[RMDB]
RNA sequence: GGGAACGACUCGAGUAGAGUCGAAAAUGGAUGGAUAUGCAGUUAUUGCUGAAGACACUUUUGGAGCUUCCAAUAAUGUUAUAAAAGAGUUAAAAAUCAUCGAUAGGAUUGGUGCAGGUGAUUUAUCACCGCGCGAUAUCUUCGGAUAUCGCGCGGUAAAAGAAACAACAACAACAAC
Reactivity to DMS in 0.01 (KOAc 150mM, MgCl2 10mM, bicine 150mM(pH8.5), 24C), signal-to-noise 1, nucleotides 027 to 126: u030g000g000a100u030g030g000a100u110a010u030g000c050a050g000u070u000a000u020u000g000c270u030g000a060a080g010a060c050a060c200u030u030u000u060g000g000a100g010c040u000u000c000c000a020a000u000a010a040u000g000u030u000a080u000a040a020a130a180g000a080g000u000u000a040a040a030a100a070u000c030a040u000c130g010a050u010a050g000g000a140u060u010g000g030u000g000c000a100g020g030u000g000a020u000u000u000a080u040c010
Reactivity to 2A3 in 0.01 (KOAc 150mM, MgCl2 10mM, bicine 150mM(pH8.5), 24C), signal-to-noise 2, nucleotides 027 to 126: u140g010g000a000u000g020g000a000u000a070u170g120c100a050g120u090u050a030u150u040g000c020u000g000a020a000g020a000c040a110c220u260u150u100u300g180g040a130g000c000u000u050c000c000a000a000u000a060a000u010g000u000u090a110u070a070a030a000a010g140a090g000u090u110a050a050a100a000a110u040c000a000u000c000g060a010u030a090g150g000a160u140u050g070g070u040g050c060a040g000g000u000g110a060u020u010u090a240u070c030